[RMDB]
RNA sequence: GGGAACGACUCGAGUAGAGUCGAAAAUACGCUAAGUUCGCUUAGCGUAAAAUAUAUGCGACUAUAUAAAACCUGAUAGCCGUAGAAGAUCAUGUAUCGGCAAAAUCACCAUCUUCGGAUGGUGAAAUGUGUUUAAUCUGUUCGCAGAUUAAACACAAAAAGAAACAACAACAACAAC
Reactivity to DMS in 0.01 (KOAc 150mM, MgCl2 10mM, bicine 150mM(pH8.5), 24C), signal-to-noise 2, nucleotides 027 to 126: u010a000c000g010c000u000a000a000g020u000u000c180g050c010u000u000a010g020c000g000u000a000a000a100a070u000a050u000a090u000g040c050g000a050c050u000a030u000a070u010a050a130a120a200c030c030u000g000a120u000a060g010c000c020g000u000a100g010a220a080g000a040u010c100a050u010g000u000a050u010c020g000g010c120a080a070a090a110u000c000a010c000c020a000u000c000u000u020c190g040g000a000u000g000g000u000g000a000a020a040
Reactivity to 2A3 in 0.01 (KOAc 150mM, MgCl2 10mM, bicine 150mM(pH8.5), 24C), signal-to-noise 3, nucleotides 027 to 126: u060a000c010g000c000u010a010a000g040u010u050c060g060c130u000u000a010g000c000g000u000a000a010a000a010u040a000u020a020u050g080c040g090a030c090u010a010u000a000u010a110a110a030a060c020c010u040g060a080u060a040g010c010c010g000u030a020g050a300a020g030a130u150c050a080u270g060u140a060u110c010g000g000c000a000a050a020a040u010c000a000c000c010a000u020c000u050u060c170g100g000a000u010g000g000u010g010a000a000a010

About this RNA
Chemical mapping of a 177-nucleotide RNA with DMS and 2A3. Source: RMDB library M2PK50, as collected in RNAgym. The RNA was probed in 150 mM KOAc, 10 mM MgCl2 and 150 mM bicine (pH 8.5) at 24 C. For DMS the reverse transcriptase was MarathonRT.